[RMDB]
RNA sequence: GGGAACGACUCGAGUAGAGUCGAAAAAGCCAACAGCUUGACGAGGCGCUUAAGAAACUUCACCAACAAGUGAAAGAGCGACAGAAACCAGGUGAAGAUGGGAGUACAAUUGCGACGAUCAAACAACACUCCAUCACGCGUUCGCGCGUGAUGGAGUAAAAGAAACAACAACAACAAC
Reactivity to 2A3 in 0.01 (KOAc 150mM, MgCl2 10mM, bicine 150mM(pH8.5), 24C), signal-to-noise 1, nucleotides 027 to 126: a000g050c000c000a000a000c150a000g000c000u060u300g000a030c030g000a000g120g020c000g000c080u090u200a180a210g100a110a050a020c000u000u000c000a000c000c000a130a040c000a090a000g000u100g110a000a090a000g000a130g000c000g040a040c000a070g230a000a060a000c070c080a130g080g000u060g040a000a000g000a000u000g000g160g000a210g000u020a040c000a120a300u000u070g000c000g000a120c000g120a120u070c080a060a060a280c170a100a000c000
This 177-nucleotide RNA was probed chemically with 2A3.
The data come from the RNA Mapping Database (RMDB), library OK1LIB.
Values cover nucleotides 27 to 126.